[RMDB]
RNA sequence: GGGAACGACUCGAGUAGAGUCGAAAAUCGUAAAACCGCGGCAAGUGGAGUUAGCGAGAGGAGGCUGGGUUUUGGCUUCCUUAAGCAAUCGGUCACCGAGAAGGUGUGGUCGUUACCGUGAAAUUCCGUGACAAAAUAACGUUCGCGUUAUUUUGAAGGAAGUUUGUUGUUUCGACAACAAACUUCCAAAAGAAACAACAACAACAAC
Reactivity to 2A3 in 0.01 (KOAc 150mM, MgCl2 10mM, bicine 150mM(pH8.5), 24C), signal-to-noise 2, nucleotides 027 to 156: u040c000g030u000a010a000a010a100c110c010g000c000g040g020c120a150a080g070u140g040g090a240g030u160u220a020g060c000g030a020g000a010g000g000a000g010g000c040u140g170g070g090u160u160u140u290g050g030c000u010u000c020c000u010u010a010a000g010c000a000a050u090c010g000g010u010c000a020c010c110g060a110g120a200a020g080g000u150g010u040g090g020u020c000g040u060u010a090c020c010g000u020g100a010a000a180u110u040c030c010g060u060g060a060c040a020a010a000a000u000a000a050c010g010u000u030c300g020c000g140u010u010a020u010u060u000u000g010a060a040

Structure probing data (2A3) for a 207-nucleotide construct. It was measured as part of the RMDB library M2RFPK. The RNA was probed in 150 mM KOAc, 10 mM MgCl2 and 150 mM bicine (pH 8.5) at 24 C.